[RMDB]
RNA sequence: GGGAACGACUCGAGUAGAGUCGAAAAAAAGCUUUAGAUGUUAGGAUGGAUUAUCUCACCUUGCACAAGACAGUGAGUGCUAGAGUUUAAGUUUUCUCCUCUGCAAAAUAAGGAGUGGCAGUGAGACGAGGCCAUCUAAAUUCGUUUAGAUGGCCUCAAAAGAAACAACAACAACAAC
Reactivity to DMS in 0.01 (KOAc 150mM, MgCl2 10mM, bicine 150mM(pH8.5), 24C), signal-to-noise 2, nucleotides 027 to 126: a060a040a080g010c020u000u000u000a040g040a130u010g010u000u020a110g000g020a110u000g040g010a110u000u000a080u000c110u010c030a050c030c060u020u000g000c010a070c100a120a090g000a080c130a080g000u000g010a110g010u000g000c000u000a030g000a100g010u000u020u000a020a060g010u000u000u000u010c010u010c010c040u000c030u000g000c090a100a050a070a050u020a060a100g000g000a050g000u010g000g010c040a040g000u010g000a120g020a150c240
Reactivity to 2A3 in 0.01 (KOAc 150mM, MgCl2 10mM, bicine 150mM(pH8.5), 24C), signal-to-noise 1, nucleotides 027 to 126: a000a000a000g000c040u150u080u040a010g010a050u100g040u160u050a000g060g000a120u090g030g000a150u120u150a180u230c050u000c030a020c030c020u040u030g000c050a040c000a110a000g110a060c080a070g050u060g130a020g030u030g070c010u050a020g010a000g070u000u060u050a150a050g000u050u070u030u060c000u000c000c000u010c000u010g020c110a000a080a080a240u170a080a040g170g000a000g000u050g160g000c030a020g000u010g070a030g000a050c050

An RNA of 177 nucleotides, treated with DMS and 2A3 and read out base by base.
For DMS, 1,496 sequencing reads were counted.
For DMS the reverse transcriptase was MarathonRT.
The reactions ran in a buffer of 150 mM KOAc, 10 mM MgCl2 and 150 mM bicine (pH 8.5), at 24 C.
For 2A3 the reverse transcriptase was SuperScript II with manganese.